[RMDB]
RNA sequence: GGGAACGACUCGAGUAGAGUCGAAAAGCUCUUUUGCAAUAACAACCUUUGAUUACUGAAUCCCUACACUCAAACUAUAGUGAUAUAUCAGUGUUUGAGAGUGACCUCUAGAAAAAAGAAAAGUGUUUUUAGAAAUGCGUACAAGUCACCCCCAAAAAAAUAAUGGGAUAUUCGUAUCCCAUUAUUUAAAAGAAACAACAACAACAAC
Reactivity to 2A3 in 0.01 (KOAc 150mM, MgCl2 10mM, bicine 150mM(pH8.5), 24C), signal-to-noise 2, nucleotides 027 to 156: g010c010u030c000u050u120u080u060g050c060a070a050u110a190a100c030a030a040c040c040u130u110u150g080a100u150u230a070c020u020g010a070a110u000c000c000c000u040a030c080a030c030u030c050a140a040a160c020u110a050u120a230g050u020g020a040u040a010u030a060u200c030a020g040u010g030u030u050u040g050a010g000a000g030u050g030a020c000c030u000c010u090a090g090a040a120a010a040a000a000g040a030a130a040a050g040u050g050u020u010u010u080u010a050g010a060a090a030u120g030c010g000u040a060c000a050a000g000u030c040a030c020c060c050c030c130a020a110a030a000
Reactivity to DMS in 0.01 (KOAc 150mM, MgCl2 10mM, bicine 150mM(pH8.5), 24C), signal-to-noise 1, nucleotides 027 to 156: g000c020u000c080u000u000u000u000g020c030a100a100u000a080a080c020a160a080c030c040u020u000u000g040a110u000u000a130c060u000g000a110a140u010c030c080c030u000a100c070a110c040u000c010a010a060a160c060u000a140u010a060g010u020g040a150u000a070u000a190u000c060a060g030u000g010u000u000u000g010a030g010a070g010u010g000a060c030c010u000c040u000a120g000a030a040a100a090a040a180g000a050a020a010a050g010u000g010u000u000u010u010u010a120g000a090a120a080u000g030c040g040u020a090c060a040a080g010u000c030a010c010c020c010c000c020a000a000a000a200